[RMDB]
About this RNA: An RNA of 177 nucleotides, treated with 2A3 and DMS and read out base by base. It was measured as part of the RMDB library OK2TST. 2A3 adducts were read by reverse transcription with SuperScript II with manganese. The DMS profile rests on 2,898 reads. The RNA was probed in 150 mM KOAc, 10 mM MgCl2 and 150 mM bicine (pH 8.5) at 24 C.

RNA sequence: GGGAACGACUCGAGUAGAGUCGAAAAUAUGUCAUCUGAGGACAACUCAGGAUCCGGCGGUUAGAUUAGGAUCCCUGAUGCAGGAUCCACACAGAUUCCGAUAGUUGUCACAGGAUUCAGGAUCCUCAUAAUGUUUCGAGUUCGCUCGAAACAUUAUAAAAGAAACAACAACAACAAC
Reactivity to 2A3 in 0.01 (KOAc 150mM, MgCl2 10mM, bicine 150mM(pH8.5), 24C), signal-to-noise 2, nucleotides 027 to 126: u300a160u160g120u080c050a080u040c100u070g040a100g160g020a010c010a010a020c010u070c110a010g000g010a000u000c010c000g080g030c030g120g110u110u210a060g010a300u160u100a040g000g020a000u000c000c000c020u110g040a070u110g020c010a010g000g000a000u000c000c000a020c000a010c000a030g090a090u220u110c010c010g020a030u020a110g050u000u060g080u060c000a010c010a020g020g060a000u010u140c030a000g030g060a030u000c000c010u050c020
Reactivity to DMS in 0.01 (KOAc 150mM, MgCl2 10mM, bicine 150mM(pH8.5), 24C), signal-to-noise 4, nucleotides 027 to 126: u010a090u010g000u010c110a050u010c040u020g010a180g020g010a040c030a020a030c010u000c170a120g010g010a000u000c000c000g000g020c070g000g020u010u020a060g030a130u010u010a090g010g000a010u000c030c000c020u010g000a060u010g030c110a080g010g000a010u000c000c000a130c200a080c140a120g000a130u010u000c070c030g000a120u020a040g010u000u000g010u000c020a100c080a150g000g010a100u010u000c150a070g010g020a070u000c000c000u030c300